Chemical mapping of a 207-nucleotide RNA with DMS and 2A3. The data come from the RNA Mapping Database (RMDB), library M2RFPK. Conditions: 150 mM KOAc, 10 mM MgCl2 and 150 mM bicine (pH 8.5), 24 C. Values cover nucleotides 27 to 156.
RNA sequence: GGGAACGACUCGAGUAGAGUCGAAAAGAAAGAAAGAAAUUAGCUCGCCAGUUAGCGAGGUCUGUCCCCACACGACAGAUAAUCGGGUGCAACUCCCGCCCCUUCUCCGAGGGUCAUCGGAACCAAAAAAACUCAGGCAACUUCGGUUGCCUGAGAACUACUUUCUUACGUUCGCGUAAGAAAGUAGAAAAGAAACAACAACAACAAC
Reactivity to DMS in 0.01 (KOAc 150mM, MgCl2 10mM, bicine 150mM(pH8.5), 24C), signal-to-noise 2, nucleotides 027 to 156: g000a150a080a090g020a110a110a150g000a120a120a100u000u020a220g030c010u000c020g030c020c010a240g020u010u000a060g030c000g020a020g050g020u030c040u000g010u000c000c020c030c300a040c130a130c120g020a050c010a000g020a010u000a150a130u000c000g000g010g000u010g030c020a130a300c020u000c000c000c000g000c140c000c000c080u000u020c020u000c000c050g010a000g000g000g000u000c030a080u030c020g000g030a030a210c110c050a000a000a070a080a050a060a150c010u000c010a000g000g000c000a010a020c020u010u000c300g050g010u010u000g010c020c000u020g020a010g020a020a090
Reactivity to 2A3 in 0.01 (KOAc 150mM, MgCl2 10mM, bicine 150mM(pH8.5), 24C), signal-to-noise 5, nucleotides 027 to 156: g040a020a050a000g090a040a100a020g060a050a150a060u150u080a110g040c000u000c010g010c020c040a150g160u140u150a010g020c000g000a000g000g010u000c000u000g010u010c020c020c030c000a030c000a000c040g010a000c000a000g020a010u030a040a060u090c010g000g010g000u010g010c010a000a000c010u010c010c000c000g010c000c000c000c000u120u060c030u000c040c000g000a000g010g000g020u080c040a000u010c000g010g020a000a030c050c020a010a050a050a030a010a030a080c000u010c000a000g000g000c010a010a000c010u030u130c200g090g000u000u000g000c010c000u000g000a000g000a000a000